[RMDB]
RNA sequence: GGGAACGACUCGAGUAGAGUCGAAAACCAAGUCUAAGUCGCUGAACAUCUAUAAUGUAUUAGGCAUCAGGUAAGUACACAAUUCUCUAAGCGAUGAGAAGCGUGUGGAAAAUUAGGGAAGGGCUACGUGAUGUCGAUUUUUCGAAAUCGACAUCACAAAAGAAACAACAACAACAAC
Reactivity to 2A3 in 0.01 (KOAc 150mM, MgCl2 10mM, bicine 150mM(pH8.5), 24C), signal-to-noise 5, nucleotides 027 to 126: c010c000a030a040g000u000c020u030a030a040g020u030c010g030c050u040g120a100a050c040a080u040c050u170a090u120a210a200u160g160u070a120u040u050a040g020g000c020a050u040c050a020g080g020u150a130a050g090u060a010c010a000c000a040a040u020u020c000u000c000u050a050a170g150c060g100a090u080g000a050g000a010a020g020c120g050u000g000u020g010g010a040a040a050a080u160u090a060g000g000g070a000a060g020g020g000c010u040a040c120
Reactivity to DMS in 0.01 (KOAc 150mM, MgCl2 10mM, bicine 150mM(pH8.5), 24C), signal-to-noise 3, nucleotides 027 to 126: c010c010a050a140g000u030c060u000a050a050g000u000c020g000c020u010g000a100a100c080a070u010c100u030a100u060a090a070u020g020u000a060u030u000a030g000g020c040a090u000c090a060g000g010u020a020a060g010u070a040c010a020c010a030a190u010u000c000u000c000u000a070a110g000c130g000a050u010g010a010g020a020a000g000c300g000u000g070u000g010g000a040a050a040a060u020u020a040g000g000g000a050a040g010g000g020c120u000a060c270
Structure probing data (2A3 and DMS) for a 177-nucleotide construct. Values cover nucleotides 27 to 126. The RNA was probed in 150 mM KOAc, 10 mM MgCl2 and 150 mM bicine (pH 8.5) at 24 C. For DMS the reverse transcriptase was MarathonRT.